[RMDB]
RNA sequence: GGGAACGACUCGAGUAGAGUCGAAAAACUCAAGGCCAGUUCAGUAAGACAUUUUGUAUAAACAUGGAUUUUGAGAAAUGGAAUUUGAAUAUGAGGAAAGAAUCUACCCUGGAUGUAUUUACUGAAACUCUGUCACUUAUUUCGAUAAGUGACAGAGAAAAGAAACAACAACAACAAC
Reactivity to 2A3 in 0.01 (KOAc 150mM, MgCl2 10mM, bicine 150mM(pH8.5), 24C), signal-to-noise 1, nucleotides 027 to 126: a000c000u010c020a040a060g070g040c020c020a000g100u040u000c000a000g000u020a060a000g030a020c000a010u000u030u100u110g180u000a080u050a210a060a000c030a010u050g130g010a070u090u080u000u180g030a040g090a010a110a020u080g050g090a020a180u120u090u150g070a100a000u170a130u180g060a050g110g080a070a070a070g000a070a010u070c000u040a060c010c030c000u000g000g010a030u000g020u020a140u080u100u000a050c000u000g000a050a060a060
Reactivity to DMS in 0.01 (KOAc 150mM, MgCl2 10mM, bicine 150mM(pH8.5), 24C), signal-to-noise 3, nucleotides 027 to 126: a080c020u000c050a100a070g010g000c050c070a110g020u000u000c010a040g010u000a000a030g000a170c010a010u000u000u000u000g000u000a150u010a070a030a040c090a120u020g010g000a090u000u010u000u030g020a290g000a040a050a030u000g000g010a090a180u000u010u010g000a090a040u010a060u000g010a110g000g000a080a070a060g000a060a030u000c030u010a040c040c030c020u000g010g020a030u000g010u000a040u000u000u000a040c030u010g000a050a060a210
Chemical mapping of a 177-nucleotide RNA with 2A3 and DMS. The RNA was probed in 150 mM KOAc, 10 mM MgCl2 and 150 mM bicine (pH 8.5) at 24 C. For 2A3, 728 sequencing reads were counted. For DMS, 1,917 sequencing reads were counted.